[RMDB]
RNA sequence: GGGAACGACUCGAGUAGAGUCGAAAAUGAGUAAAUCCUUGAGUUCAUAAUCAUCGUUGUCAUCGGUUAUGUACGAACCAAACAAUGUUUCAACCGGCAUAGUGGAUACGUAGAUACUAUCCAUCAACGCGUGUUUAUGAUUCGUCAUAAACACGCGAAAAGAAACAACAACAACAAC
Reactivity to 2A3 in 0.01 (KOAc 150mM, MgCl2 10mM, bicine 150mM(pH8.5), 24C), signal-to-noise 3, nucleotides 027 to 126: u190g010a070g130u120a040a030a050u020c010c000u000u010g060a020g000u010u000c010a000u020a110a010u000c000a010u060c120g120u050u160g060u160c020a050u030c060g000g000u010u010a050u080g030u040a040c020g020a000a030c070c050a000a000a150c060a020a190u170g020u010u130u090c070a110a120c030c030g010g040c020a050u030a160g050u010g000g000a000u010a030c120g040u040a060g020a210u050a140c010u010a050u010c010c020a000u000c000a080a020
Reactivity to DMS in 0.01 (KOAc 150mM, MgCl2 10mM, bicine 150mM(pH8.5), 24C), signal-to-noise 2, nucleotides 027 to 126: u030g000a110g020u090a070a220a070u040c000c000u000u060g030a180g000u000u000c030a000u000a010a000u000c000a170u030c120g000u010u000g030u000c270a030u020c160g000g000u000u000a070u020g020u000a010c030g000a060a050c110c030a100a030a100c300a130a000u050g000u000u000u040c110a020a100c080c010g000g000c100a110u030a020g010u000g000g000a020u000a000c250g000u020a120g000a070u080a000c100u020a000u000c020c020a020u000c070a010a140
This 177-nucleotide RNA was probed chemically with 2A3 and DMS. Reactivities are given for positions 27 through 126. DMS adducts were read by reverse transcription with MarathonRT. The data come from the RNA Mapping Database (RMDB), library OK1LIB. Reactivities are rounded to 0.1 and cut off at 0 and 3. For 2A3 the reverse transcriptase was SuperScript II with manganese.